[RMDB]
RNA sequence: GGGAACGACUCGAGUAGAGUCGAAAAGUAUGAGAAAACACUCCAGCUUGCCAAUCAAGAUGACCUCCCAGGAUUCUAUGAGGUCCAGCCUCAGGUGUGUGAGGAGGUGCCUACUGUGCUGUUUUCCGAGCCGGUAAUUAUUCGUAAUUACCGGCUCAAAAGAAACAACAACAACAAC
Reactivity to DMS in 0.01 (KOAc 150mM, MgCl2 10mM, bicine 150mM(pH8.5), 24C), signal-to-noise 2, nucleotides 027 to 126: g000u010a090u000g010a160g000a090a060a100a110c100a060c050u000c040c030a160g010c020u010u000g010c060c120a070a050u000c050a050a080g020a090u000g000a100c050c020u010c010c050c030a190g000g010a090u000u010c030u000a070u020g000a060g000g000u010c170c280a140g020c010c000u000c010a050g020g000u000g000u020g020u000g010a150g030g010a040g000g000u000g010c060c030u000a110c070u010g020u000g010c080u000g010u000u000u000u000c030c090
The record gives the reactivity of an RNA of 177 nucleotides to DMS. DMS adducts were read by reverse transcription with MarathonRT. Source: RMDB library OK2TRN, as collected in RNAgym.